RNA sequence: GGGAACGACUCGAGUAGAGUCGAAAAUGCUGGCGAGCUCAAAACGGUACACUAUUCUUUACAGAUGCCAUUCCAACAACAGAAUGUGCACGUGCCGCAGUUCCAUACAUCGGAUACAAAUCAGAGUUCACACAAACAUGUGCAUCCUCCAACCUCACUUCAAUGCUUCUUUCGAGAAGCAUUGAAGAAAAGAAACAACAACAACAAC
Reactivity to 2A3 in 0.01 (KOAc 150mM, MgCl2 10mM, bicine 150mM(pH8.5), 24C), signal-to-noise 6, nucleotides 027 to 156: u070g010c020u010g030g040c050g030a020g000c010u030c060a050a080a030a040c030g010g010u060a010c060a030c040u130a120u250u110c050u090u240u130a100c100a060g050a130u040g000c000c010a000u010u010c030c030a070a080c040a070a010c020a200g020a020a030u060g090u210g020c020a000c080g010u020g010c010c000g000c020a040g000u040u000c020c010a030u090a150c070a080u140c060g020g020a020u050a180c050a020a120a040u140c090a050g010a010g040u050u040c020a020c000a000c010a050a210a020c050a080u190g070u060g080c010a040u020c000c030u060c040c010a030a060c010c050u080c030a030
Reactivity to DMS in 0.01 (KOAc 150mM, MgCl2 10mM, bicine 150mM(pH8.5), 24C), signal-to-noise 1, nucleotides 027 to 156: u000g010c000u040g040g030c110g030a100g000c000u000c020a020a120a040a140c020g000g040u020a030c050a230c080u000a080u000u000c060u000u050u010a150c120a120g040a070u000g000c030c040a050u000u000c000c060a090a160c070a100a180c150a120g000a050a010u000g040u000g040c000a060c050g070u000g000c000c040g000c010a200g000u000u020c000c000a030u000a140c090a140u010c120g010g000a190u000a300c060a040a040a120u000c090a200g000a070g020u000u020c000a070c030a060c050a050a070a080c170a130u000g030u010g000c030a140u000c030c000u000c040c020a050a110c060c000u000c030a120

Annotation
The record gives the reactivity of an RNA of 207 nucleotides to 2A3 and DMS. The DMS profile rests on 1,551 reads. It was measured as part of the RMDB library OK3TST. For 2A3, 3,745 sequencing reads were counted. DMS adducts were read by reverse transcription with MarathonRT.